[RMDB]
RNA sequence: GGGAACGACUCGAGUAGAGUCGAAAAGAUAUGGAGUUUGGGAGCUCCACUCACUCGUUGAAACUCUCAAUUUCGGAAACGAAAUUGAGAGUGGAGAGUGGAGAGCUUUGAUCAAACUCCUAAGUCAUCUCUACUACAUGUUCGCAUGUAGUAGAGAAAAAGAAACAACAACAACAAC
Reactivity to DMS in 0.01 (KOAc 150mM, MgCl2 10mM, bicine 150mM(pH8.5), 24C), signal-to-noise 2, nucleotides 027 to 126: g010a040u000a300u000g010g010a000g010u000u000u000g000g010g000a040g000c010u000c000c100a130c150u020c000a030c040u000c040g000u020u020g010a250a200a010c000u000c000u020c000a000a000u010u000u000c010g000g000a140a120a170c010g000a000a000a000u000u000g000a020g000a000g020u000g000g010a060g000a020g020u000g000g010a150g010a010g000c010u010u000u010g000a120u010c010a010a010a010c000u010c000c000u000a010a060g000u010c020a140
Reactivity to 2A3 in 0.01 (KOAc 150mM, MgCl2 10mM, bicine 150mM(pH8.5), 24C), signal-to-noise 2, nucleotides 027 to 126: g010a010u050a030u150g000g000a020g020u000u000u000g060g000g010a000g020c020u010c060c000a170c010u160c010a010c010u080c010g220u250u130g080a110a090a020c010u030c000u020c000a000a000u000u000u020c010g020g030a070a100a090c000g000a030a000a000u020u000g000a010g020a010g020u000g020g000a030g010a020g000u010g050g020a080g000a000g010c000u210u220u160g150a230u300c040a000a030a040c000u000c000c000u000a120a000g070u020c020a120